[RMDB]
RNA sequence: GGGAACGACUCGAGUAGAGUCGAAAAUCAUUGAGCCGUUUUUUCUGCACGCAAACCCCUAAUUCAAAUGGCUCGACCAGUGAAACAUCAUCCAAUAGAGAAAUACGGUUGCGUACCGGUUCCGGGCACUUGCUUCCAUUUUCGAAUGGAAGCAAGUAAAAGAAACAACAACAACAAC
Reactivity to DMS in 0.01 (KOAc 150mM, MgCl2 10mM, bicine 150mM(pH8.5), 24C), signal-to-noise 2, nucleotides 027 to 126: u010c080a080u010u020g010a040g020c020c010g000u010u000u000u000u050u000c060u030g020c050a030c110g000c110a090a120a140c080c000c020c060u000a080a110u010u010c090a020a040a040u000g010g000c010u010c010g010a040c050c070a070g020u010g000a110a110a080c060a060u010c040a060u010c060c030a050a150u030a080g000a120g010a070a030a050u010a080c050g010g010u000u000g000c040g000u000a070c030c040g010g000u010u000c010c030g000g000g030c210
Reactivity to 2A3 in 0.01 (KOAc 150mM, MgCl2 10mM, bicine 150mM(pH8.5), 24C), signal-to-noise 1, nucleotides 027 to 126: u080c050a000u030u170g010a000g030c040c010g050u030u010u020u020u000u100c070u100g010c040a030c060g070c090a060a050a300c010c000c000c040u100a080a100u190u050c060a000a050a120u050g000g030c000u010c000g030a050c000c010a030g010u040g100a000a060a060c000a060u100c000a010u060c020c040a080a020u090a040g090a010g050a120a070a000u100a040c010g000g030u000u020g030c070g010u010a020c000c000g000g010u050u050c020c050g040g080g020c030